[RMDB]
RNA sequence: GGGAACGACUCGAGUAGAGUCGAAAAUCGGUGCAUGAGAGAAGAGCAAGAACUGAUGUCUUACAACAAUUGAAGUGCACAUAUGUUCGGCUUCAUGAAGAAAGGCAGCUAGAGUAGAGACAGGUAAAGUGGGUUGCCUCUUUUGCAUCCCAUCUCCCACUAGCCAAUGGUUCGCCAUUGGCUAGUGAAAAGAAACAACAACAACAAC
Reactivity to DMS in 0.01 (KOAc 150mM, MgCl2 10mM, bicine 150mM(pH8.5), 24C), signal-to-noise 2, nucleotides 027 to 156: u010c070g030g000u000g010c010a020u000g020a150g000a080g010a080a100g040a120g030c040a040a070g020a120a080c040u020g020a120u010g000u010c030u000u000a100c070a130a110c050a080a160u010u010g000a070a120g050u000g010c130a070c080a130u010a090u010g020u000u010c070g020g010c010u010u000c030a020u000g010a090a150g010a110a080a070g040g010c000a070g010c030u000a100g020a090g030u000a050g000a050g030a100c090a030g020g000u000a070a080a100g010u000g010g050g060u000u010g000c030c050u000c070u020u000u000u010g000c040a060u010c000c030c020a130u000c000u000c020c000
Reactivity to 2A3 in 0.01 (KOAc 150mM, MgCl2 10mM, bicine 150mM(pH8.5), 24C), signal-to-noise 4, nucleotides 027 to 156: u110c030g010g010u010g000c020a040u060g020a020g010a010g030a180a010g030a010g070c030a030a060g040a070a040c030u040g050a080u080g080u030c030u070u130a090c060a160a020c060a170a220u120u040g030a040a020g040u110g110c110a020c020a050u190a080u120g090u060u090c040g000g000c020u030u020c040a030u070g040a020a060g040a100a050a020g040g000c030a010g010c040u050a020g000a010g090u080a020g010a010g020a050c020a030g030g050u140a070a050a010g030u040g030g030g000u030u030g010c020c030u100c040u020u070u050u080g000c010a020u030c010c000c000a030u010c050u030c020c020
The record gives the reactivity of an RNA of 207 nucleotides to DMS and 2A3. Source: RMDB library OK3TST, as collected in RNAgym. The 2A3 profile rests on 2,703 reads. Reactivities are given for positions 27 through 156. The RNA was probed in 150 mM KOAc, 10 mM MgCl2 and 150 mM bicine (pH 8.5) at 24 C.